The record gives the reactivity of an RNA of 177 nucleotides to 2A3 and DMS. The RNA was probed in 150 mM KOAc, 10 mM MgCl2 and 150 mM bicine (pH 8.5) at 24 C. For DMS the reverse transcriptase was MarathonRT.
[RMDB]
RNA sequence: GGGAACGACUCGAGUAGAGUCGAAAAAUGAGAGUGUAUUGAAACGUAUUGGUGCAGAGUUUGUGGCUAUGGAUCCUCCACAAUUGCCACUUGUCCCUGAGGAUCUUGAUAUCGAAGUUACGGUUGAAAUCAAUUUGAGUUUCGACUCAAAUUGAUUAAAAGAAACAACAACAACAAC
Reactivity to 2A3 in 0.01 (KOAc 150mM, MgCl2 10mM, bicine 150mM(pH8.5), 24C), signal-to-noise 4, nucleotides 027 to 126: a010u160g010a050g010a030g060u060g000u070a110u130u140g060a070a050a020c050g030u060a070u100u150g080g010u040g000c050a010g010a030g080u020u090u110g030u050g010g000c030u060a100u100g040g000a020u030c010c020u020c030c010a050c030a080a100u050u080g030c030c000a020c000u010u070g040u030c030c010c010u030g030a030g030g010a020u000c000u000u070g060a060u070a020u110c060g030a090a030g080u060u070a080c040g030g070u030u080g050a050
Reactivity to DMS in 0.01 (KOAc 150mM, MgCl2 10mM, bicine 150mM(pH8.5), 24C), signal-to-noise 9, nucleotides 027 to 126: a080u010g000a080g010a070g010u010g010u000a090u000u000g000a090a070a080c100g010u000a080u010u010g010g020u000g020c050a060g010a090g010u000u000u010g020u000g010g010c090u000a090u010g000g000a060u010c040c030u000c010c160a050c090a050a070u000u010g010c060c030a050c060u000u000g000u000c020c020c020u010g000a070g010g010a030u000c020u000u000g000a100u000a050u000c050g000a100a100g010u000u010a070c080g010g000u000u000g000a100